[RMDB]
RNA sequence: GGGAACGACUCGAGUAGAGUCGAAAACCACAGAUCUUCGGAUCUGUGGAAACAACAUAUACUGUCAGUUGAGACAGACACAAAUACAUUGAGUGUACAAUGAAAGCGAUUGCUUCGGCAAUCGCAAGACUUACAUAGAGUUCGCUCUAUGUAAGUCAAAAGAAACAACAACAACAAC
Reactivity to DMS in 0.01 (KOAc 150mM, MgCl2 10mM, bicine 150mM(pH8.5), 24C), signal-to-noise 7, nucleotides 027 to 126: c010c000a010c000a000g000a000u000c000u000u000c200g040g010a000u000c000u000g020u000g000g000a030a060a060c080a080a070c120a090u000a100u010a180c020u000g010u000c000a150g020u010u010g010a180g000a020c010a020g010a150c130a050c090a070a070a100u010a100c090a050u000u000g000a170g000u000g010u000a090c120a050a050u000g000a080a100a110g000c000g000a010u000u000g010c000u000u000c190g020g010c000a000a000u000c000g010c010a020a030
Reactivity to 2A3 in 0.01 (KOAc 150mM, MgCl2 10mM, bicine 150mM(pH8.5), 24C), signal-to-noise 9, nucleotides 027 to 126: c000c000a000c000a000g000a000u010c010u080u190c250g120g000a000u000c000u010g000u010g000g010a020a030a000c020a020a010c040a010u180a020u070a280c010u010g000u010c030a150g040u160u180g180a090g000a120c010a000g060a030c020a000c010a060a160a020u270a050c050a040u060u110g050a060g140u130g030u090a070c040a040a090u130g090a190a060a020g000c000g000a000u000u010g000c000u020u060c160g070g000c000a000a000u000c000g000c010a000a000